[RMDB]
RNA sequence: GGGAACGACUCGAGUAGAGUCGAAAAGGUGGUGUGGGCAGUCUUUAGCACAUACCAGUGGUCACAACGGUUCUUGUUAAGUUCAGAGGUGACUGAAUAAAUAGGUCCUCUCCUUUGAGCUGCGGGAGUCUUGUCCAACAUUCGUGUUGGACAAGACAAAAGAAACAACAACAACAAC
Reactivity to DMS in 0.01 (KOAc 150mM, MgCl2 10mM, bicine 150mM(pH8.5), 24C), signal-to-noise 4, nucleotides 027 to 126: g020g010u010g000g000u000g050u000g000g000g050c000a140g010u020c160u020u030u050a160g030c000a030c010a010u010a000c010c000a050g020u010g000g020u040c050a050c140a070a170c210g010g020u030u000c080u000u000g000u010u010a150a070g030u010u000c000a010g000a010g000g000u020g000a000c010u010g000a100a200u010a080a100a090u010a300g010g010u000c030c300u000c110u000c000c020u000u000u010g000a030g000c020u000g010c040g010g000g010a230
Reactivity to 2A3 in 0.01 (KOAc 150mM, MgCl2 10mM, bicine 150mM(pH8.5), 24C), signal-to-noise 2, nucleotides 027 to 126: g130g060u020g010g000u020g000u000g020g030g060c020a040g040u160c070u130u200u200a020g000c000a000c010a090u000a000c000c010a010g160u070g090g020u030c030a020c020a100a040c120g050g000u090u000c000u000u000g150u120u190a040a010g000u050u010c030a000g000a020g050g000u020g000a000c010u010g020a030a040u180a170a040a020u120a110g000g020u010c000c020u030c050u060c020c010u000u040u070g000a000g000c000u020g030c010g000g030g000a000
Conditions: 150 mM KOAc, 10 mM MgCl2 and 150 mM bicine (pH 8.5), 24 C. Chemical mapping of a 177-nucleotide RNA with DMS and 2A3. It was measured as part of the RMDB libraries RFM100 and RFMREP. For 2A3 the reverse transcriptase was SuperScript II with manganese.